[RMDB]
RNA sequence: GGGAACGACUCGAGUAGAGUCGAAAAAACUGCAAGCUCCUUCAACUGGUUCUGUCCGGUGAGAAGUGAUCAAGCUUGGGCUGACAAGAGGCUCAGGGAGCCCUCACGUUCUUUCGCUUUUUUACCUAGAUUCAUCUAUCUUCGGAUAGAUGAAUCUAAAAGAAACAACAACAACAAC
Reactivity to DMS in 0.01 (KOAc 150mM, MgCl2 10mM, bicine 150mM(pH8.5), 24C), signal-to-noise 2, nucleotides 027 to 126: a030a080c080u010g020c050a080a080g000c040u000c020c000u000u010c020a240a040c010u000g000g050u000u000c210u000g000u000c000c010g060g010u020g010a060g020a010a030g010u050g000a080u000c230a110a080g000c010u000u000g020g000g020c050u020g000a180c120a120a100g010a130g010g010c020u000c010a110g020g020g000a020g000c030c010c050u010c060a120c100g010u010u000c040u000u020u050c120g010c020u000u000u000u000u000u000a200c060c060u010
Reactivity to 2A3 in 0.01 (KOAc 150mM, MgCl2 10mM, bicine 150mM(pH8.5), 24C), signal-to-noise 1, nucleotides 027 to 126: a000a010c060u160g020c030a050a030g000c010u010c020c000u010u020c010a040a010c020u020g040g000u270u120c070u160g210u040c020c000g000g010u020g050a300g010a030a010g060u110g100a090u150c120a040a000g000c000u020u030g010g010g020c020u040g000a020c010a080a100g030a060g030g000c010u020c040a030g070g150g020a000g010c000c000c050u020c000a060c010g010u020u000c030u030u190u090c030g040c000u020u060u040u020u130u050a050c020c010u010
This 177-nucleotide RNA was probed chemically with DMS and 2A3. DMS adducts were read by reverse transcription with MarathonRT. As a SHAPE reagent, 2A3 marks flexible, mostly unpaired nucleotides at the ribose 2'-OH. The DMS profile rests on 937 reads. Reactivities are given for positions 27 through 126.